About this RNA
An RNA of 207 nucleotides, treated with DMS and 2A3 and read out base by base. Source: RMDB library OK3TST, as collected in RNAgym. The reactions ran in a buffer of 150 mM KOAc, 10 mM MgCl2 and 150 mM bicine (pH 8.5), at 24 C.
[RMDB]
RNA sequence: GGGAACGACUCGAGUAGAGUCGAAAAGAGGCUUCCAUAAAGCCUAAAUAAGAUCAACGUGUAGAAGCACUUCAUCCACGUUAAUCCAUUUCGUCAGAGUAUACUGGCGAAGCCGUGGGGUGAAAUAAUAAUACCAGGAAAGCAUUCUAUGGUAUUAGACUAGCAAUUGCUUCGGCGAUUGCUGGUCAAAAGAAACAACAACAACAAC
Reactivity to DMS in 0.01 (KOAc 150mM, MgCl2 10mM, bicine 150mM(pH8.5), 24C), signal-to-noise 4, nucleotides 027 to 156: g000a060g030g040c000u000u000c050c260a140u010a120a080a070g020c000c010u000a030a060a120u010a120a080g000a050u010c010a060a040c020g000u000g010u010a140g010a050a090g040c050a070c050u010u010c030a100u000c070c010a020c010g010u010u000a040a050u000c020c070a190u010u000u010c010g020u000c020a030g030a300g030u000a170u000a090c010u000g020g010c010g010a020a080g010c130c050g000u000g030g020g020g040u000g000a010a070a110u000a070a190u000a010a010u000a010c000c000a070g020g000a030a080a240g020c160a130u010u000c010u000a120u000g010g000u000a010u000u010a070
Reactivity to 2A3 in 0.01 (KOAc 150mM, MgCl2 10mM, bicine 150mM(pH8.5), 24C), signal-to-noise 3, nucleotides 027 to 156: g100a000g010g000c000u030u000c100c020a160u240a040a080a020g000c010c010u030a030a060a020u100a020a010g040a070u060c020a010a040c050g010u000g010u050a050g040a120a010g040c010a000c010u010u010c030a020u000c000c000a000c010g000u020u080a020a030u030c050c030a020u010u010u010c000g000u010c000a000g000a020g130u150a060u050a210c000u000g000g000c000g000a000a010g000c000c010g010u030g000g050g000g000u030g010a010a010a020u090a010a010u030a010a000u000a030c000c000a000g030g010a010a030a030g090c030a050u050u010c020u050a220u040g000g000u000a010u020u010a010